[RMDB]
RNA sequence: GGGAACGACUCGAGUAGAGUCGAAAACCACUGCUCGAGGACGUCCUCCCUGUCUCCUCGGUUCUUCUUCGAUCCGGACCGGCUCAUCUCGGCAAAAGGCGGCAGUCCUCAGUACUCUUACUCUUUCGUGCCUUUGGGUUCGCCCAAAGGAAAAGAAACAACAACAACAAC
Reactivity to DMS in 0.01 (KOAc 150mM, MgCl2 10mM, bicine 150mM(pH8.5), 24C), signal-to-noise 9, nucleotides 027 to 129: c060c030a230c080u000g000c000u020c020g000a010g030g030a210c070g020u030c030c030u040c000c000c020u030g020u030c040u030c000c000u010c000g010g010u050u040c030u060u010c020u020u020c030g030a140u030c050c040g020g010a110c140c060g020g000c000u000c040a080u040c030u010c040g050g010c090a060a070a090a090g060g000c080g030g040c090a060g000u000c020c020u010c060a060g030u050a090c050u020c030u020u030a080c010u000c050u020u060u020c070g040u020g000
Reactivity to 2A3 in 0.01 (KOAc 150mM, MgCl2 10mM, bicine 150mM(pH8.5), 24C), signal-to-noise 9, nucleotides 027 to 129: c020c010a080c040u020g000c000u020c020g000a010g030g070a150c010g020u040c010c010u050c010c000c010u020g040u010c020u010c020c010u030c020g030g010u050u020c020u090u010c010u070u090c070g090a080u030c020c030g020g020a040c020c020g010g000c010u010c010a080u010c030u020c010g020g000c030a040a060a010a020g050g000c000g010g010c020a010g030u030c000c000u030c020a010g020u060a090c010u020c010u070u090a090c010u010c000u040u070u060c050g050u070g080
An RNA of 170 nucleotides, treated with DMS and 2A3 and read out base by base. The data come from the RNA Mapping Database (RMDB), library 15KLIB. The 2A3 profile rests on 93,651 reads.